[RMDB]
RNA sequence: GGGAACGACUCGAGUAGAGUCGAAAAACUGCGGUAUUCGUACCGCAGUACAUAAAAAGGAUAAAAUACCAGUAGCCCGAAACGCAUGCGAGCACUACUGGCGCAAGAACCACUUCGGUGGUUCUAAGUCUCAUGACGAAUUCGUUCGUCAUGAGACAAAAGAAACAACAACAACAAC
Reactivity to 2A3 in 0.01 (KOAc 150mM, MgCl2 10mM, bicine 150mM(pH8.5), 24C), signal-to-noise 2, nucleotides 027 to 126: a000c010u000g000c000g000g020u010a030u050u080c150g040u020a010c010c000g000c000a000g000u000a020c000a000u300a020a090a020a030a030g170g000a060u210a100a210a100a030u190a110c010c010a000g000u020a000g050c020c030c040g050a110a110a010c080g030c070a010u230g110c090g070a090g000c020a000c020u000a000c010u010g030g010c030g040c040a030a000g000a010a000c000c000a020c010u060u090c240g040g000u000g010g020u000u000c000u000a000a010
Reactivity to DMS in 0.01 (KOAc 150mM, MgCl2 10mM, bicine 150mM(pH8.5), 24C), signal-to-noise 2, nucleotides 027 to 126: a090c000u020g000c000g000g010u000a010u000u030c190g020u000a000c000c000g000c000a010g000u000a010c080a070u000a030a040a060a100a180g010g000a250u020a050a050a050a090u000a080c000c000a010g000u000a010g010c060c030c040g000a030a100a050c240g000c140a070u010g000c030g020a130g020c160a190c050u000a000c000u000g010g010c040g000c160a130a030g000a010a000c000c000a010c000u000u010c160g010g010u000g000g020u010u000c000u000a030a070
The record gives the reactivity of an RNA of 177 nucleotides to 2A3 and DMS.
Conditions: 150 mM KOAc, 10 mM MgCl2 and 150 mM bicine (pH 8.5), 24 C.
For 2A3, 1,875 sequencing reads were counted.
The data come from the RNA Mapping Database (RMDB), library M2PK50.